[RMDB]
RNA sequence: GGGAACGACUCGAGUAGAGUCGAAAAUUGGAGGGGUUGGUCCCUCCGGUGAGAGAAGAAAACUCAUCCCAAACAAAAAACAGGGUUUCUGAUAACCGGUGCGACAAUAUGCCCUUCCAAGGCACUGUACAGACAGCCUAUUCGUAGGCUGUCUGUAAAAAGAAACAACAACAACAAC
Reactivity to 2A3 in 0.01 (KOAc 150mM, MgCl2 10mM, bicine 150mM(pH8.5), 24C), signal-to-noise 1, nucleotides 027 to 126: u010u000g000g000a020g020g030g000g000u050u110g070g170u060c020c000c000u000c000c000g020g000u000g000a150g040a030g030a210a000g070a040a050a020a010c010u010c050a060u050c000c020c020a070a100a080c080a040a060a030a000a000a000c060a050g000g000g000u010u000u010c010u000g060a100u050a100a020c000c000g000g000u030g010c020g020a010c090a010a210u090a120u300g010c000c000c010u000u000c010c010a000a000g010g000c130a000c120u070g060
Reactivity to DMS in 0.01 (KOAc 150mM, MgCl2 10mM, bicine 150mM(pH8.5), 24C), signal-to-noise 1, nucleotides 027 to 126: u000u000g010g000a010g010g010g080g020u060u040g000g000u050c000c080c010u000c000c030g000g000u000g030a070g000a030g000a160a070g010a090a000a100a000c010u000c080a030u000c000c000c000a060a080a140c100a010a090a090a010a070a150c140a150g000g010g000u000u020u010c010u010g000a130u000a140a080c040c000g020g000u000g000c240g000a060c110a160a220u050a120u030g000c000c000c000u000u040c010c030a010a000g050g020c120a100c020u000g020

An RNA of 177 nucleotides, treated with 2A3 and DMS and read out base by base. For 2A3 the reverse transcriptase was SuperScript II with manganese. For DMS the reverse transcriptase was MarathonRT. DMS (dimethyl sulfate) methylates the pairing face of unpaired adenines and cytosines. The reactions ran in a buffer of 150 mM KOAc, 10 mM MgCl2 and 150 mM bicine (pH 8.5), at 24 C.